[RMDB]
RNA sequence: GGGAACGACUCGAGUAGAGUCGAAAAGAUAUGGAACCUGUAGGCGUUGAUCUCCCUGGUCGGAAACGACCAAGGAGGGAGCCUAGAGGUUCCUAAGUCAAAGUUAUUGGUCUUCGGACCAAUAACACAUCCCGAUAGUGUUCGCACUAUCGGGAUGAAAAGAAACAACAACAACAAC
Reactivity to 2A3 in 0.01 (KOAc 150mM, MgCl2 10mM, bicine 150mM(pH8.5), 24C), signal-to-noise 2, nucleotides 027 to 126: g010a010u030a000u060g000g010a010a000c020c010u110g300u090a010g010g010c050g140u290u300g120a280u050c010u020c010c000c000u000g030g000u000c000g000g020a000a040a030c000g010a000c010c010a020a000g000g010a000g000g020g040a070g010c000c000u000a010g000a010g000g010u000u030c010c000u000a030a000g010u000c040a050a090a140g000u000u000a000u000u000g000g000u030c010u030u120c300g080g000a000c010c000a010a000u000a000a000c000a000
Reactivity to DMS in 0.01 (KOAc 150mM, MgCl2 10mM, bicine 150mM(pH8.5), 24C), signal-to-noise 2, nucleotides 027 to 126: g010a060u010a300u000g000g000a000a000c000c000u000g010u000a020g000g000c000g020u010u010g010a090u010c010u000c000c000c030u000g020g030u000c000g010g000a060a080a130c000g020a010c000c000a020a030g000g000a010g020g000g020a080g000c000c000u010a010g010a020g010g000u000u000c000c010u000a000a040g030u010c020a130a130a210g010u000u000a000u010u000g000g000u000c000u000u020c300g020g000a020c000c000a000a010u000a000a000c000a270